[RMDB]
RNA sequence: GGGAACGACUCGAGUAGAGUCGAAAAUACUGUGACAGAAGUUAACGACUGGUUGUUAGGCUUCACAUAUGCAAAAUGGCUAAAUUUACCCUCUUCUUUAUUCAAAGUAUCAAUACGACCAUUAACACAAUUACCUAACAUUCGUGUUAGGUAAUUGAAAAGAAACAACAACAACAAC
Reactivity to DMS in 0.01 (KOAc 150mM, MgCl2 10mM, bicine 150mM(pH8.5), 24C), signal-to-noise 9, nucleotides 027 to 126: u010a060c070u010g010u000g020a100c190a090g000a070a040g010u000u000a070a080c080g010a100c120u010g020g010u000u000g010u000u000a080g010g020c020u000u010c060a080c110a070u010a060u010g010c090a040a040a070a050u010g010g000c040u000a040a060a080u000u000u000a110c050c020c060u000c060u000u000c030u000u000u000a080u020u010c090a040a060a070g010u000a050u010c060a040a060u010a100c110g010a090c030c020a060u010u010a090a110c210a130
Reactivity to 2A3 in 0.01 (KOAc 150mM, MgCl2 10mM, bicine 150mM(pH8.5), 24C), signal-to-noise 7, nucleotides 027 to 126: u080a010c040u040g010u050g100a020c030a090g050a070a020g050u040u040a090a030c040g090a070c090u120g150g050u110u070g050u040u030a040g010g010c000u050u070c040a030c030a050u170a040u110g040c020a000a030a060a160u080g030g010c020u070a050a060a200u120u120u140a110c020c010c030u010c040u060u010c010u030u170u080a140u080u070c050a070a050a030g020u020a070u170c040a050a050u060a080c020g030a060c010c010a060u120u170a140a010c050a000
Annotation:
Structure probing data (DMS and 2A3) for a 177-nucleotide construct. Source: RMDB library OK2TST, as collected in RNAgym. 2A3 adducts were read by reverse transcription with SuperScript II with manganese. Reactivities are given for positions 27 through 126. For 2A3, 7,602 sequencing reads were counted.